[RMDB]
RNA sequence: GGGAACGACUCGAGUAGAGUCGAAAAUCGGUGUCCACGGCCAAGGUCACAUACCAGCGGCCAUCCGGCUCGCGGGACACGAUCACCAUCGUCGGAUUCAGCGUUGCGAGGGUUUCGUCGUCCCAGGCCGGACGUAACUUUUCGAAGUUACGUCCGGAAAAGAAACAACAACAACAAC
Reactivity to 2A3 in 0.01 (KOAc 150mM, MgCl2 10mM, bicine 150mM(pH8.5), 24C), signal-to-noise 4, nucleotides 027 to 126: u050c010g040g050u060g040u050c040c050a040c080g020g000c020c000a030a040g000g010u050c050a020c040a250u290a080c060c050a030g070c020g030g010c010c000a000u010c010c020g010g010c070u060c060g140c140g000g000g010a000c010a000c020g000a050u070c060a000c030c010a040u000c000g080u010c030g050g120a100u210u090c080a040g070c040g160u220u200g010c010g010a010g030g000g000u000u030u030c000g000u000c040g010u000c030c000c000a000g040g000
Reactivity to DMS in 0.01 (KOAc 150mM, MgCl2 10mM, bicine 150mM(pH8.5), 24C), signal-to-noise 3, nucleotides 027 to 126: u030c040g010g000u000g020u000c040c030a210c070g000g000c010c050a060a300g010g030u000c120a070c130a110u030a120c050c100a070g000c300g020g000c010c020a050u040c130c090g010g010c010u010c090g020c160g000g030g000a040c000a000c010g000a020u000c060a130c070c040a060u000c000g000u010c030g030g000a160u010u000c170a210g000c050g010u020u000g010c010g000a050g000g020g000u000u020u000c020g020u000c160g000u000c000c010c000a170g030g000
Structure probing data (2A3 and DMS) for a 177-nucleotide construct. High 2A3 reactivity points to a flexible backbone, as in loops and unpaired stretches. It was measured as part of the RMDB libraries RFM100 and RFMREP. Conditions: 150 mM KOAc, 10 mM MgCl2 and 150 mM bicine (pH 8.5), 24 C. 2A3 adducts were read by reverse transcription with SuperScript II with manganese.